[RMDB]
RNA sequence: GGGAACGACUCGAGUAGAGUCGAAAAGGAGCUCGGCAAGCUCUUAAUCGUAGGUAGAGCUUGCGUUCGCUCUACCUUACCACCGGAGCGAACUGUAGGGUCGGUGGUAUGGUGACUCUACAGUUAGGGCACCAUACGAUAUUGCUCUAACCGAGCACAUACGAUAGGGAUUCGUCCCUAUCGUAUGAAAAGAAACAACAACAACAAC
Reactivity to 2A3 in 0.01 (KOAc 150mM, MgCl2 10mM, bicine 150mM(pH8.5), 24C), signal-to-noise 5, nucleotides 027 to 156: g090g020a060g010c010u010c020g010g010c050a030a040g010c010u000c030u010u060a060a060u070c040g050u050a040g000g040u030a000g000a000g000c000u070u130g090c120g100u080u040c020g000c000u000c000u010a010c000c000u010u040a020c000c010a000c000c010g010g010a010g050c040g050a090a090c070u130g040u170a080g020g050g030u040c010g010g040u040g010g000u020a030u030g000g030u010g030a130c000u000c010u020a060c060a130g040u140u070a010g000g010g000c010a010c020c020a030u060a060c030g020a040u040a090u100u070g000c000u000c010u010a050a040c020c010g000a000g000c020a000
Reactivity to DMS in 0.01 (KOAc 150mM, MgCl2 10mM, bicine 150mM(pH8.5), 24C), signal-to-noise 2, nucleotides 027 to 156: g030g010a150g030c010u000c030g040g000c020a090a210g000c000u000c030u000u010a060a100u000c070g010u000a080g030g010u000a020g000a060g040c000u010u020g040c140g010u000u000c130g020c000u000c000u000a030c000c000u000u000a060c040c020a070c040c060g000g010a040g040c050g020a070a120c050u010g040u000a110g000g010g010u000c010g000g040u010g020g030u000a020u000g010g000u010g000a100c010u000c010u000a070c050a240g000u000u000a000g000g010g000c020a040c050c010a060u000a060c030g010a110u020a130u000u000g000c010u000c040u000a120a130c040c040g040a070g020c000a200